[RMDB]
RNA sequence: GGGAACGACUCGAGUAGAGUCGAAAAUACGUUCUCCUUCGGAUGCCCAGGUCGGACCGCGAGGAGGUGGAGAUACCAUGCCGACCCGAAGAAGGAAAGGAGGACACGGACGACAAACCGUAGGUACAGAGCAGUUGCUUCGGCAACUGCAAAAGAAACAACAACAACAAC
Reactivity to 2A3 in 0.01 (KOAc 150mM, MgCl2 10mM, bicine 150mM(pH8.5), 24C), signal-to-noise 3, nucleotides 027 to 129: u170a010c010g040u040u010c000u020c010c000u050u070c000g100g010a030u080g040c010c020c020a010g030g090u000c040g010g010a070c030c050g000c070g060a110g000g000a020g020g000u060g030g000a090g000a020u130a090c040c050a030u100g060c000c010g030a010c000c000c030g040a040a020g040a010a020g050g000a020a000a010g020g000a010g000g000a000c020a000c040g010g010a010c000g010a000c050a030a110a030c040c010g050u060a060g050g030u050a040c020a020g100a040
Reactivity to DMS in 0.01 (KOAc 150mM, MgCl2 10mM, bicine 150mM(pH8.5), 24C), signal-to-noise 3, nucleotides 027 to 129: u070a100c060g010u040u000c020u020c010c020u050u000c080g010g040a060u000g060c000c060c000a150g030g080u040c010g010g050a260c050c000g060c200g070a090g020g030a130g030g060u020g000g000a120g020a140u070a060c020c020a070u000g020c020c030g020a090c020c050c090g050a080a040g070a050a100g010g080a030a080a020g000g000a060g010g050a000c080a070c050g010g020a030c110g020a110c160a040a130a100c090c070g020u010a000g000g010u000a110c110a040g030a070
The data come from the RNA Mapping Database (RMDB), library 15KLIB. An RNA of 170 nucleotides, treated with 2A3 and DMS and read out base by base. The DMS profile rests on 7,488 reads. 2A3 adducts were read by reverse transcription with SuperScript II with manganese. For DMS the reverse transcriptase was MarathonRT.